[RMDB]
RNA sequence: GGGAACGACUCGAGUAGAGUCGAAAACUACACCAUUUGGCAAUAUUAUUAGCAAGAAAUAAGCCAACAAAGGUCUAUGUAAUAUGACUAGAGGUCAUACAGAGAUUAAUUUCCUGUGACCUUUCUCUUGCUGUAUCAGAAAUAUUACCUUACAUCACUUAGUACCAGCGUUCGCGCUGGUACUAAGAAAAGAAACAACAACAACAAC
Reactivity to 2A3 in 0.01 (KOAc 150mM, MgCl2 10mM, bicine 150mM(pH8.5), 24C), signal-to-noise 2, nucleotides 027 to 156: c080u210a040c030a060c040c030a080u030u070u170g000g000c040a060a040u080a040u240u000a030u030u050a050g010c000a030a010g050a040a180a040u170a110a040g000c020c040a020a020c050a050a100a040g010g010u030c040u080a070u220g020u050a050a180u030a130u180g010a010c010u030a040g010a010g120g010u000c000a010u060a180c040a030g150a000g020a050u080u170a040a110u160u160u010c000c000u000g020u000g010a000c000c000u010u070u010c050u010c000u000u010g000c020u000g080u100a040u180c040a020g090a110a040a000u040a030u040u070a040c030c040u110u110a030c030a110u120c090a040